[RMDB]
RNA sequence: GGGAACGACUCGAGUAGAGUCGAAAAAGCGGAGGCUGACGGACCUACUGAAUCGCUCGAGCGCAGCCUGCGGCGUAUGAUAUUGCUUCUUGCUGAGCGCCGUCAAUCUCUUAUUACCGCCGCAGUACUGCUAAUGCUGGUUCGCCAGCAUUAGCAGAAAAGAAACAACAACAACAAC
Reactivity to 2A3 in 0.01 (KOAc 150mM, MgCl2 10mM, bicine 150mM(pH8.5), 24C), signal-to-noise 1, nucleotides 027 to 126: a000g080c060g000g010a010g020g000c030u010g000a010c000g030g000a030c000c050u080a140c130u220g190a150a120u130c080g000c040u010c030g070a000g000c060g000c000a010g080c020c000u000g000c000g020g000c020g000u080a120u260g130a080u050a140u130u180g000c010u050u100c080u100u090g050c050u050g010a030g000c060g000c020c000g040u000c000a020a010u000c010u000c000u000u020a170u150u160a110c040c020g000c020c010g000c010a010g000u040a030
Reactivity to DMS in 0.01 (KOAc 150mM, MgCl2 10mM, bicine 150mM(pH8.5), 24C), signal-to-noise 1, nucleotides 027 to 126: a060g010c270g070g000a030g000g020c060u010g000a040c030g030g000a250c080c120u020a090c180u010g020a090a140u000c100g010c030u010c010g010a110g000c140g020c130a070g000c300c020u000g010c000g000g010c000g030u000a040u020g000a040u010a110u020u000g000c040u000u000c070u000u000g040c080u000g010a060g010c080g000c020c050g010u000c010a030a070u000c020u000c010u000u000a040u010u000a170c160c000g000c010c000g000c000a090g000u000a110

This 177-nucleotide RNA was probed chemically with 2A3 and DMS. The DMS profile rests on 854 reads. 2A3 adducts were read by reverse transcription with SuperScript II with manganese. The reactions ran in a buffer of 150 mM KOAc, 10 mM MgCl2 and 150 mM bicine (pH 8.5), at 24 C.